[RMDB]
Source: RMDB library OK2TRN, as collected in RNAgym. The record gives the reactivity of an RNA of 177 nucleotides to DMS and 2A3. For 2A3, 11,953 sequencing reads were counted. 2A3 adducts were read by reverse transcription with SuperScript II with manganese. Conditions: 150 mM KOAc, 10 mM MgCl2 and 150 mM bicine (pH 8.5), 24 C. For DMS, 11,639 sequencing reads were counted.

RNA sequence: GGGAACGACUCGAGUAGAGUCGAAAAGUGUGCGCCCGCAGAAGUACCAGGACCAGUCUGACUUCACACCGAACGAUCAGCUUGCUGACCCGGUGCUUCAGGAGGCGUUCGGUCGUCCGUUCGCGGGGCAAUCAUAGUAGUUCGCUACUAUGAUUGCAAAAGAAACAACAACAACAAC
Reactivity to DMS in 0.01 (KOAc 150mM, MgCl2 10mM, bicine 150mM(pH8.5), 24C), signal-to-noise 9, nucleotides 027 to 126: g020u010g020u000g000c030g010c000c000c010g010c150a140g010a040a020g020u000a010c030c000a080g010g010a090c080c010a030g010u010c010u000g010a030c050u000u000c030a130c250a130c300c210g000a030a020c280g000a130u000c010a020g010c300u010u000g000c000u010g000a100c020c000c010g000g000u000g000c020u000u000c000a060g010g010a300g010g010c020g020u000u000c050g010g000u000c050g000u010c020c040g000u000u010c080g000c040g010g010g000
Reactivity to 2A3 in 0.01 (KOAc 150mM, MgCl2 10mM, bicine 150mM(pH8.5), 24C), signal-to-noise 6, nucleotides 027 to 126: g150u120g010u010g030c020g030c000c010c020g020c100a030g000a020a000g000u000a010c010c020a040g000g070a160c130c020a000g040u070c010u010g000a020c010u030u040c040a060c090a140c110c100g030a040a040c070g060a300u010c010a010g070c050u150u250g010c010u050g040a070c000c010c010g000g000u010g000c000u010u000c000a000g010g040a120g000g000c000g000u010u020c010g020g070u040c020g040u010c030c010g010u070u080c090g000c020g070g000g070